[RMDB]
RNA sequence: GGGAACGACUCGAGUAGAGUCGAAAACGACAGCCCUAUAGCUAUAGAAGAAGUCAGAGGGGAUGCGCACGCAGGAGUCAUCCGCAUCCAGACAUCAGCUAUGUUCGGUCUGAAGACGGAUGGAGUCCCUACGUAACAGCUUCGGCUGUUACGUAGGAAAAGAAACAACAACAACAAC
Reactivity to DMS in 0.01 (KOAc 150mM, MgCl2 10mM, bicine 150mM(pH8.5), 24C), signal-to-noise 3, nucleotides 027 to 126: c140g020a100c120a060g030c030c020c020u000a080u010a090g020c050u000a160u000a110g040a160a090g000a120a090g010u000c040a040g000a150g000g000g000g000a040u010g000c090g020c150a020c110g000c040a100g030g020a090g000u000c010a030u000c050c000g010c180a050u010c040c000a020g020a020c060a070u000c060a080g000c110u000a070u000g000u000u020c130g000g010u000c020u000g030a070a030g020a090c060g000g000a010u000g010g000a080g030u000c050
Reactivity to 2A3 in 0.01 (KOAc 150mM, MgCl2 10mM, bicine 150mM(pH8.5), 24C), signal-to-noise 3, nucleotides 027 to 126: c040g060a020c020a020g010c010c010c010u100a100u060a080g010c010u030a020u070a230g150a200a010g020a090a000g090u070c060a030g040a070g200g060g000g030a010u040g000c030g000c050a030c050g030c060a040g000g160a040g090u090c010a030u010c000c000g000c020a020u050c010c000a000g010a020c020a090u180c080a040g030c050u140a110u190g090u080u160c110g010g030u010c010u000g040a020a010g030a050c010g000g020a020u050g030g010a030g080u020c060

Structure probing data (DMS and 2A3) for a 177-nucleotide construct. DMS adducts were read by reverse transcription with MarathonRT. Conditions: 150 mM KOAc, 10 mM MgCl2 and 150 mM bicine (pH 8.5), 24 C. The DMS profile rests on 2,180 reads. The data come from the RNA Mapping Database (RMDB), library OK2TRN.